[RMDB]
Structure probing data (DMS and 2A3) for a 207-nucleotide construct.
For DMS the reverse transcriptase was MarathonRT.
The RNA was probed in 150 mM KOAc, 10 mM MgCl2 and 150 mM bicine (pH 8.5) at 24 C.

RNA sequence: GGGAACGACUCGAGUAGAGUCGAAAACUCUGAACAACAAGAGAGAUCCAUGUUUCAUAGUUCAAUCGUGGCAUGGAGCACAACUUGCACAACUCUAAUUUUUAAAUCUGAAUGUGUAAUAAAAAGCCUAUACUAAAUAGGUCAUAAUAUAAGCAGAUCAAUAACACGCAUUCGUGCGUGUUAUUGAAAAAGAAACAACAACAACAAC
Reactivity to DMS in 0.01 (KOAc 150mM, MgCl2 10mM, bicine 150mM(pH8.5), 24C), signal-to-noise 1, nucleotides 027 to 156: c020u000c000u010g000a090a120c050a090a070c000a120a020g010a120g020a300g020a110u000c020c000a030u000g000u000u010u000c030a130u000a130g020u010u000c220a100a140u000c050g000u010g020g000c020a060u000g000g000a040g000c010a150c060a120a160c060u010u010g020c050a080c000a100a180c090u010c070u030a050a060u020u000u000u000u050a040a110a090u000c030u040g000a030a110u000g020u000g000u010a060a060u000a060a050a130a190a130g010c000c010u010a020u010a270c160u000a060a060a080u000a050g000g030u000c000a030u010a040a110u000a040u010a050a130g020c000a080g000a150
Reactivity to 2A3 in 0.01 (KOAc 150mM, MgCl2 10mM, bicine 150mM(pH8.5), 24C), signal-to-noise 4, nucleotides 027 to 156: c010u020c030u090g100a110a030c040a040a010c010a130a050g030a010g010a000g000a090u000c020c010a000u020g070u020u180u170c100a100u190a200g030u160u180c150a170a250u130c100g010u020g000g000c000a000u000g010g030a000g000c010a010c020a080a130c080u030u100g000c030a040c030a070a180c060u030c030u080a100a200u060u060u070u110u190a130a120a090u020c030u050g040a090a050u020g040u010g010u030a070a060u060a120a240a020a000a000g000c010c000u030a020u060a180c080u190a250a060a080u010a040g000g010u030c020a050u120a270a010u100a010u040a120a010g050c060a020g040a140